RNA sequence: GGGAACGACUCGAGUAGAGUCGAAAAAAGGUAAAAUCUACAUUGUGCAGCUCUUAUUGUGUGUGAGGGUUGGCCUCAUUAACCAGCGCUAACAAGCCGUGCAAAUGCUCUGAUUGGGCAGCUUUUAUGUCUAAAUGUAGUUCGCUACAUUUAGACAAAAAGAAACAACAACAACAAC
Reactivity to DMS in 0.01 (KOAc 150mM, MgCl2 10mM, bicine 150mM(pH8.5), 24C), signal-to-noise 7, nucleotides 027 to 126: a060a040g010g020u020a070a050a070a070u020c050u010a080c080a100u010u000g020u010g010c030a050g020c030u000c080u000u010a080u010u010g010u010g010u000g020u010g000a040g010g000g020u020u010g010g010c030c020u000c110a040u010u020a080a090c040c060a050g000c060g010c050u010a070a080c140a090a080g000c030c040g020u000g010c080a040a050a070u000g010c020u010c030u000g000a130u010u020g000g000g020c050a080g000c030u000u000u000u000a090
Reactivity to 2A3 in 0.01 (KOAc 150mM, MgCl2 10mM, bicine 150mM(pH8.5), 24C), signal-to-noise 9, nucleotides 027 to 126: a000a000g160g000u140a110a100a030a080u060c080u070a070c030a120u080u110g020u060g060c030a020g000c000u020c000u080u120a160u210u110g050u020g030u010g020u030g080a040g050g030g010u170u110g050g020c000c000u050c020a050u040u060a030a030c020c010a010g010c020g000c060u020a060a050c060a080a010g040c020c020g020u030g000c010a040a040a130u070g000c000u000c020u040g170a220u080u080g000g010g000c010a020g020c010u010u030u020u020a210

Structure probing data (DMS and 2A3) for a 177-nucleotide construct. The data come from the RNA Mapping Database (RMDB), libraries RFM100 and RFMREP. For 2A3 the reverse transcriptase was SuperScript II with manganese. Conditions: 150 mM KOAc, 10 mM MgCl2 and 150 mM bicine (pH 8.5), 24 C.